[RMDB]
RNA sequence: GGGAACGACUCGAGUAGAGUCGAAAAGUCAGCUACGCUGUGGUGACGUACUGGACCUGCUACAUGAAGCGGUAUCAUCGCCUGGAAUACGCGGCCGCGUGUCUUCGGGCGGCGAAAGACGACCAGCAAAUACUUUACCGUUCGCGGUAAAGUAUUUAAAAGAAACAACAACAACAAC
Reactivity to DMS in 0.01 (KOAc 150mM, MgCl2 10mM, bicine 150mM(pH8.5), 24C), signal-to-noise 9, nucleotides 027 to 126: g010u010c030a050g010c220u000a030c050g020c050u010g020u000g020g010u000g000a090c040g000u000a050c030u000g000g000a090c040c020u000g020c030u000a110c220a100u000g010a090a070g020c020g000g010u000a150u000c020a040u000c010g010c010c000u000g000g000a030a030u000a010c020g010c010g010g020c190c210g000c010g000u000g000u000c130u000u000c010g010g000g010c000g010g010c050g000a030a080a110g010a070c110g000a090c030c030a090g000c160
Reactivity to 2A3 in 0.01 (KOAc 150mM, MgCl2 10mM, bicine 150mM(pH8.5), 24C), signal-to-noise 6, nucleotides 027 to 126: g030u020c010a010g000c070u060a040c060g010c100u080g020u070g170g060u050g050a040c030g010u030a060c030u030g040g030a040c000c030u080g030c020u050a060c040a230u160g070a100a010g020c010g000g030u040a070u060c010a010u040c010g010c000c000u010g020g020a030a010u030a020c010g010c010g120g100c120c120g020c020g020u010g000u000c130u020u030c010g010g000g000c000g000g000c010g040a060a030a000g090a020c050g040a040c000c010a020g040c040
Structure probing data (DMS and 2A3) for a 177-nucleotide construct. The DMS profile rests on 21,593 reads. The 2A3 profile rests on 13,969 reads. Conditions: 150 mM KOAc, 10 mM MgCl2 and 150 mM bicine (pH 8.5), 24 C. In probing experiments dimethyl sulfate is read out at A N1 and C N3, which are open when not base-paired.